[RMDB]
RNA sequence: GGGAACGACUCGAGUAGAGUCGAAAAUGACAGUGUCCGGCCUAACGACGGACGCUGACGCGAAAGCGUGGUCUAGCGAACCAAUUAGGCUGCUUGAUGCGGCCAAUUGCUGACAGAAAAGCUACCUUUGUUGAGUACCAUUCGUGGUACUCAACAAAAAAGAAACAACAACAACAAC
Reactivity to DMS in 0.01 (KOAc 150mM, MgCl2 10mM, bicine 150mM(pH8.5), 24C), signal-to-noise 3, nucleotides 027 to 126: u040g010a170c010a000g010u000g010u000c020c000g020g000c090c070u020a170a100c230g000a040c060g000g000a010c000g020c000u010g010a040c000g000c030g000a170a080a120g000c020g040u000g010g010u010c050u010a050g010c020g000a140a070c180c020a040a040u000u030a120g030g000c010u000g010c020u010u000g000a220u030g020c030g000g000c000c000a010a000u020u020g000c090u070g030a150c170a080g000a050a040a110a130g000c050u000a020c080c000u050
Reactivity to 2A3 in 0.01 (KOAc 150mM, MgCl2 10mM, bicine 150mM(pH8.5), 24C), signal-to-noise 4, nucleotides 027 to 126: u120g030a020c000a000g020u000g000u000c000c000g040g110c080c050u190a180a060c120g060a010c000g030g010a000c010g000c000u000g000a030c010g010c000g030a130a010a020g010c010g020u030g020g000u020c080u070a000g000c000g000a000a040c000c000a000a000u000u010a130g000g020c010u020g000c010u060u180g090a080u300g070c000g000g000c000c000a000a010u000u020g020c030u080g040a030c020a130g180a050a100a000a010g010c020u020a040c020c000u010

This 177-nucleotide RNA was probed chemically with DMS and 2A3. For DMS the reverse transcriptase was MarathonRT. 2A3 adducts were read by reverse transcription with SuperScript II with manganese.